Source information
This 177-nucleotide RNA was probed chemically with DMS and 2A3.

[RMDB]
RNA sequence: GGGAACGACUCGAGUAGAGUCGAAAAGGCAAUUACUUCGGUAAUUGCCAUAUAAACUUGAGAAAAGAAGGGCGCAACUCAAGAAAUUUGCGAAAUAAACAAACAACGAGAGCUUCGGCUCUCGUAAGAUAUUAGUGGAGUUCGCUCCACUAAUAUCAAAAGAAACAACAACAACAAC
Reactivity to DMS in 0.01 (KOAc 150mM, MgCl2 10mM, bicine 150mM(pH8.5), 24C), signal-to-noise 2, nucleotides 027 to 126: g000g010c010a010a010u010u000a000c010u010u020c110g020g030u010a010a010u000u010g000c000c000a050u000a030u010a030a100a200c030u000u010g010a030g010a070a100a110a160g000a120a070g010g000g060c060g000c070a050a080c030u010c030a020a060g010a090a070a130u000u000u000g040c060g010a040a030a060u000a080a070a060c100a080a080a100c190a060a050c000g000a000g000a000g000c020u000u010c250g010g000c010u000c000u000c000g010u000a000a050
Reactivity to 2A3 in 0.01 (KOAc 150mM, MgCl2 10mM, bicine 150mM(pH8.5), 24C), signal-to-noise 2, nucleotides 027 to 126: g030g010c010a010a000u000u000a010c010u060u100c200g050g000u000a010a000u000u010g000c010c000a000u000a000u000a000a000a000c000u010u060g030a010g030a070a180a020a020g100a060a110g070g030g010c030g000c040a030a030c020u020c040a020a040g060a110a220a060u090u130u120g070c030g040a000a010a140u220a070a090a010c080a010a110a010c030a030a020c000g000a000g000a000g000c020u040u060c120g070g000c000u000c010u020c000g000u010a000a010

The reactions ran in a buffer of 150 mM KOAc, 10 mM MgCl2 and 150 mM bicine (pH 8.5), at 24 C. DMS (dimethyl sulfate) methylates the pairing face of unpaired adenines and cytosines.